[RMDB]
RNA sequence: GGGAACGACUCGAGUAGAGUCGAAAAGCGGAUCGGCCUGCAUCGCGGAUCCUGCGCGUGGAUCAGUGCGCCGCUCGACGUGUGCGCGAUCACGUCGUACGAUCACGGAUCCGUGCGCCUGGCCGGCCAUCAGAUGAAAGUUCGCUUUCAUCUGAUGAAAAGAAACAACAACAACAAC
Reactivity to DMS in 0.01 (KOAc 150mM, MgCl2 10mM, bicine 150mM(pH8.5), 24C), signal-to-noise 9, nucleotides 027 to 126: g020c120g020g010a100u000c000g020g010c010c010u000g010c050a100u000c050g020c010g000g000a020u000c010c010u000g010c040g000c010g010u000g010g000a030u010c040a110g040u000g000c030g010c010c010g000c050u000c150g010a090c040g020u010g020u000g000c030g020c050g000a040u000c000a020c010g010u010c020g030u000a060c160g000a120u010c170a100c170g010g000a010u000c000c010g020u000g010c300g000c080c090u010g010g010c010c010g010g010c050
Reactivity to 2A3 in 0.01 (KOAc 150mM, MgCl2 10mM, bicine 150mM(pH8.5), 24C), signal-to-noise 9, nucleotides 027 to 126: g130c080g020g050a220u060c010g000g000c010c000u010g000c020a060u180c040g000c010g000g010a010u000c000c020u040g010c020g000c010g000u050g140g110a100u050c070a130g030u020g030c010g000c010c010g040c050u150c090g300a300c020g140u210g010u030g070c050g000c020g020a020u030c010a000c020g180u200c020g000u080a060c080g070a140u200c080a020c130g000g000a000u000c000c000g000u010g000c020g000c020c060u020g010g000c000c030g000g010c000
Source: RMDB library OK2TRN, as collected in RNAgym. This 177-nucleotide RNA was probed chemically with DMS and 2A3. DMS adducts were read by reverse transcription with MarathonRT. Conditions: 150 mM KOAc, 10 mM MgCl2 and 150 mM bicine (pH 8.5), 24 C.